[RMDB]
RNA sequence: GGGAACGACUCGAGUAGAGUCGAAAAAGCGACGCAGAGGAAUUUGCCGGAGCAGACGUAUCGAACUGAGCCUGCAUCGGCUGAUAAGCGGCAAGCUGAGUCUGUGCCUGCGUCUGGCCCUGUGCCACAUCGCAGCAUACUUCGGUAUGCUGCGAUGAAAAGAAACAACAACAACAAC
Reactivity to 2A3 in 0.01 (KOAc 150mM, MgCl2 10mM, bicine 150mM(pH8.5), 24C), signal-to-noise 2, nucleotides 027 to 126: a000g020c050g020a010c000g010c030a000g020a060g080g110a140a120u050u160u100g010c000c010g010g000a010g070c010a020g010a040c060g060u100a250u300c060g050a170a140c130u130g020a050g050c010c000u000g010c010a070u050c010g040g000c000u020g010a010u010a120a060g030c010g080g010c050a030a040g000c070u140g010a010g070u000c040u060g120u060g090c010c020u010g020c020g010u000c000u040g070g000c000c000c000u070g060u140g020c020c010a050
Reactivity to DMS in 0.01 (KOAc 150mM, MgCl2 10mM, bicine 150mM(pH8.5), 24C), signal-to-noise 2, nucleotides 027 to 126: a090g010c110g010a030c030g010c020a000g010a120g010g020a100a100u010u000u000g000c020c000g000g000a120g010c000a010g020a060c030g010u010a140u010c110g000a090a120c160u020g000a070g020c000c000u000g000c000a030u010c030g000g000c000u000g000a070u000a140a050g020c010g000g030c120a050a140g010c010u010g000a070g000u010c010u000g000u000g030c080c010u000g000c010g010u000c000u010g030g030c010c020c090u000g010u010g000c080c070a110